[RMDB]
The record gives the reactivity of an RNA of 207 nucleotides to DMS and 2A3. Conditions: 150 mM KOAc, 10 mM MgCl2 and 150 mM bicine (pH 8.5), 24 C. Values cover nucleotides 27 to 156. The 2A3 profile rests on 2,700 reads.

RNA sequence: GGGAACGACUCGAGUAGAGUCGAAAAGUCUGAAUUCGUUCAGACAAAAAACCGUAGGCAAUGAACUACAGCAAGGACACACGACGAAGUUCGAAAGAGCAGAGUGUGGUCGGGGCUGCAUUGCCUAAACGGAAAAAGUCGUGCUUCGGCACGACAAGUUCUAACAUGCAUUCGUGCAUGUUAGAACAAAAGAAACAACAACAACAAC
Reactivity to DMS in 0.01 (KOAc 150mM, MgCl2 10mM, bicine 150mM(pH8.5), 24C), signal-to-noise 2, nucleotides 027 to 156: g010u040c000u000g000a020a020u000u000c280g020u000u000c000a000g010a030c010a010a050a070a100a090a080c050c030g000u000a010g010g000c020a030a030u000g020a170a220c060u000a150c010a010g040c010a120a240g030g000a000c020a050c020a020c010g010a210c070g010a230a300g000u000u000c010g030a180a080a230g000a030g000c020a070g000a190g000u000g000u010g020g000u000c000g030g010g040g020c000u020g000c040a020u000u000g020c000c030u000a010a000a080c000g000g010a020a040a120a120a100g000u000c000g040u000g010c010u000u000c300g050g000c010a010c010g000a000c010a020a030
Reactivity to 2A3 in 0.01 (KOAc 150mM, MgCl2 10mM, bicine 150mM(pH8.5), 24C), signal-to-noise 3, nucleotides 027 to 156: g010u000c000u010g020a040a000u100u080c120g040u160u030c040a000g000a000c000a020a140a010a000a000a010c040c010g000u020a010g000g000c000a010a010u020g030a160a120c160u190a070c240a020g000c010a050a120g170g000a020c050a000c000a000c150g300a010c040g040a170a010g020u030u020c020g050a110a070a040g000a020g000c020a010g050a020g080u010g000u020g010g020u000c010g030g030g100g050c000u020g000c010a000u010u000g020c000c010u000a000a010a020c010g030g060a090a020a010a070a010g000u000c000g000u000g000c010u040u070c190g070g000c000a000c030g000a000c000a010a000
For DMS the reverse transcriptase was MarathonRT. 2A3 adducts were read by reverse transcription with SuperScript II with manganese.